[RMDB]
RNA sequence: GGGAACGACUCGAGUAGAGUCGAAAAACUUCAUCAGAUGAGAACAAGGACAUGUUUGAAGUGUGAGGCCGAAGCCUGGAGAACGCUAUGCGCCCAGGAAAUGCAGGGCAGCAGAGACUCAAGAUGCCAGCGCCUGUUCUGGAGGCCCAGAUGGGCAACCGGCAGUAAUGUUCGCAUUACUGCCGGUAAAAGAAACAACAACAACAAC
Reactivity to 2A3 in 0.01 (KOAc 150mM, MgCl2 10mM, bicine 150mM(pH8.5), 24C), signal-to-noise 1, nucleotides 027 to 156: a010c050u190u090c050a100u070c050a010g090a220u080g010a040g040a120a090c020a050a090g040g010a050c080a110u040g060u020u070u140g060a110a030g060u080g000u040g030a040g020g030c070c040g030a040a000g050c000c000u040g030g000a060g040a160a040c040g030c040u160a110u300g040c030g040c040c000c000a010g010g000a060a030a010u160g000c020a000g000g000g000c040a040g000c010a000g040a010g020a050c040u010c130a100a010g050a110u080g010c000c000a020g020c030g100c040c010u070g010u100u020c010u030g020g020a030g040g080c040c000c000a050g040a150u110g000g000g010c040a060
Source information: Source: RMDB library OK3TST, as collected in RNAgym. An RNA of 207 nucleotides, treated with 2A3 and read out base by base. The reactions ran in a buffer of 150 mM KOAc, 10 mM MgCl2 and 150 mM bicine (pH 8.5), at 24 C. For 2A3 the reverse transcriptase was SuperScript II with manganese.